The record gives the reactivity of an RNA of 177 nucleotides to 2A3 and DMS. It was measured as part of the RMDB library OK1LIB. The DMS profile rests on 6,414 reads. For 2A3, 12,316 sequencing reads were counted. The reactions ran in a buffer of 150 mM KOAc, 10 mM MgCl2 and 150 mM bicine (pH 8.5), at 24 C.
RNA sequence: GGGAACGACUCGAGUAGAGUCGAAAACAAGCGCGGCAGGUGCUCCGGAUGUUUGGAGCUGGGUCGCAAGCUGUAUGCGCACAUGCGAUGCGCGUCUCCUGUGCGGACAGACUCUGGCAACCUGGCCUCUACUCAUGGUGUUCGCGCCGUGGGUAGAAAAAGAAACAACAACAACAAC
Reactivity to 2A3 in 0.01 (KOAc 150mM, MgCl2 10mM, bicine 150mM(pH8.5), 24C), signal-to-noise 6, nucleotides 027 to 126: c040a040a030g050c020g000c010g080g010c030a030g060g050u040g030c010u020c020c000g000g020a080u060g110u140u100u180g030g000a000g000c000u000g000g000g050u000c000g000c000a000a000g000c010u030g050u150a030u060g060c010g050c000a010c010a060u230g140c100g150a190u040g020c020g030c020g030u000c010u030c010c010u110g040u050g170c010g010g020a000c000a020g030a150c010u030c020u050g020g000c010a030a040c010c010u030g090g030c000c010
Reactivity to DMS in 0.01 (KOAc 150mM, MgCl2 10mM, bicine 150mM(pH8.5), 24C), signal-to-noise 2, nucleotides 027 to 126: c170a110a040g000c040g010c040g000g000c030a040g000g010u020g010c040u000c030c050g000g010a300u080g030u030u010u090g020g000a050g000c000u070g000g000g000u000c040g000c020a030a040g000c090u000g000u030a030u010g010c020g020c000a010c000a150u030g010c170g000a060u000g000c010g000c000g000u000c000u000c060c000u010g000u010g010c000g000g000a030c020a010g010a050c000u000c010u000g000g000c150a030a030c040c010u010g000g000c020c020